[RMDB]
RNA sequence: GGGAACGACUCGAGUAGAGUCGAAAAGUCACACUUGCAUGUGGCACACUGUUAAGUUACCUGUGGAUAAAAUUGGUUUUUGAAUAACAGUUCUGUGACUUACUGUACCUUCAGCAAGACCUUAAGCAUUGGAAUAUUGGUUCGCCAAUAUUCCAAUAAAAGAAACAACAACAACAAC
Reactivity to 2A3 in 0.01 (KOAc 150mM, MgCl2 10mM, bicine 150mM(pH8.5), 24C), signal-to-noise 4, nucleotides 027 to 126: g020u010c010a000c000a000c040u020u060g030c030a100u070g000u030g050g070c030a010c010a000c030u050g070u170u090a040a030g010u020u030a030c000c030u040g030u060g070g040a080u100a120a110a050a080u100u120g100g130u100u050u030u060u110g060a080a030u070a080a010c010a020g010u100u070c050u140g020u020g000a010c010u010u010a010c000u010g010u040a050c010c000u020u090c010a000g000c010a040a010g010a070c020c000u090u130a070a010g040c020
Reactivity to DMS in 0.01 (KOAc 150mM, MgCl2 10mM, bicine 150mM(pH8.5), 24C), signal-to-noise 8, nucleotides 027 to 126: g010u000c050a070c080a080c130u000u000g010c040a160u010g020u020g010g000c040a090c140a080c130u000g000u010u010a020a040g010u000u000a030c020c020u000g010u000g000g000a100u010a070a030a050a060u000u010g020g010u000u010u000u000u000g000a150a090u000a070a040c010a010g000u000u010c150u010g020u000g000a030c010u000u000a030c020u000g000u000a100c060c060u000u010c080a080g000c040a030a020g000a170c080c050u000u010a070a130g000c200

Structure probing data (2A3 and DMS) for a 177-nucleotide construct. Conditions: 150 mM KOAc, 10 mM MgCl2 and 150 mM bicine (pH 8.5), 24 C. For DMS the reverse transcriptase was MarathonRT. It was measured as part of the RMDB library OK2TST. Values cover nucleotides 27 to 126.